Overview:
An RNA of 177 nucleotides, treated with 2A3 and read out base by base. Conditions: 150 mM KOAc, 10 mM MgCl2 and 150 mM bicine (pH 8.5), 24 C.
RNA sequence: GGGAACGACUCGAGUAGAGUCGAAAAUGACCAUCUCACAAAAGCUGUUACGUGCUUGUAACACACUACACACUCGUUUUGUAAUCGAGAAGUAGUUGCAAGAACGGUCCUCUCAUUGCCUGACUAGGUACCCACACUGGUUCGCCAGUGUGGGUACAAAAGAAACAACAACAACAAC
Reactivity to 2A3 in 0.01 (KOAc 150mM, MgCl2 10mM, bicine 150mM(pH8.5), 24C), signal-to-noise 1, nucleotides 027 to 126: u070g010a000c000c010a030u050c060u010c010a050c030a010a030a000a020g030c090u010g020u030u070a050c050g060u070g120c150u120u140g010u050a000a010c030a000c000a000c050u030a000c030a000c000a010c000u010c030g040u010u000u080u250g190u240a050a150u050c010g000a000g000a060a020g000u000a000g000u000u050g000c020a040a000g080a070a030c070g010g000u020c010c030u000c000u010c020a090u040u160g050c020c020u090g050a110c030u080a060g050